An RNA of 170 nucleotides, treated with 2A3 and DMS and read out base by base.
Source: RMDB library 15KLIB, as collected in RNAgym.
The 2A3 profile rests on 96,241 reads.
RNA sequence: GGGAACGACUCGAGUAGAGUCGAAAAACCGGCUCAUCUCGGCAAAGGGCGGCAGUCCUCAGUGCUCUUACUCUUUCCUAUAAAGAGGAGACUGCUGGACUCGCCGCCCGAGCCCGAGCAUGGGCCCCAGGGUACAAGUUCGCUUGUACCAAAAGAAACAACAACAACAAC
Reactivity to 2A3 in 0.01 (KOAc 150mM, MgCl2 10mM, bicine 150mM(pH8.5), 24C), signal-to-noise 9, nucleotides 027 to 129: a000c000c000g000g000c000u000c000a000u010c000u000c000g000g000c030a120a130a130g010g000g000c000g000g000c000a000g000u000c000c010u000c010a020g000u150g260c030u010c020u060u200a280c010u010c000u030u030u050c060c080u200a170u240a300a020a000g000a000g020g000a000g000a000c000u010g050c050u010g000g000a000c000u020c050g000c000c000g010c000c000c000g000a000g000c000c010c000g000a000g000c040a000u010g000g000g000c000c000c000c010a100g070
Reactivity to DMS in 0.01 (KOAc 150mM, MgCl2 10mM, bicine 150mM(pH8.5), 24C), signal-to-noise 9, nucleotides 027 to 129: a040c060c050g000g000c040u000c000a050u000c000u000c050g000g040c050a090a260a180g000g000g040c000g040g040c000a050g020u000c000c000u000c020a030g000u050g080c060u000c010u030u060a300c000u020c000u000u020u040c170c190u080a130u150a130a010a000g020a030g000g000a020g000a040c000u000g010c170u000g020g020a010c020u020c100g000c000c000g040c000c010c000g000a000g040c130c020c020g010a010g000c150a000u030g010g010g000c080c020c020c060a080g010